[RMDB]
RNA sequence: GGGAACGACUCGAGUAGAGUCGAAAAGAUAUGGAGAUCCCACGGGAGCUCCACAUCGGAAACGAUGUGCGAGCAUCGAUCGUGUGGAUCUCCUAAGUCAAAACGCUAUGUCUUCGGACAUAGCGAACCCAUAUGAGCUGUUCGCAGCUCAUAUGGGAAAAGAAACAACAACAACAAC
Reactivity to 2A3 in 0.01 (KOAc 150mM, MgCl2 10mM, bicine 150mM(pH8.5), 24C), signal-to-noise 2, nucleotides 027 to 126: g000a010u030a010u090g000g010a000g000a000u000c010c040c000a000c010g090g030g120a140g030c000u000c010c000a000c000a010u020c000g000g000a020a000a010c010g000a010u010g050u030g130c300g030a010g010c020a020u140c090g100a270u040c000g000u050g050u300g000g000a000u000c000u000c000c000u000a000a000g010u000c010a020a040a080a060c020g000c000u010a010u000g000u000c000u030u080c300g190g000a000c000a000u000a010g000c000g000a000a000
Reactivity to DMS in 0.01 (KOAc 150mM, MgCl2 10mM, bicine 150mM(pH8.5), 24C), signal-to-noise 2, nucleotides 027 to 126: g000a010u010a240u020g000g010a010g030a020u000c000c000c000a030c020g020g000g000a170g010c000u000c010c010a000c000a000u010c000g040g000a050a030a100c010g030a020u000g030u000g020c220g010a020g010c010a130u000c300g020a110u000c020g020u010g030u010g030g010a010u000c010u000c010c000u000a000a040g010u000c010a070a070a090a190c010g000c000u020a010u000g020u010c000u000u000c300g060g000a000c000a000u000a000g020c020g000a010a040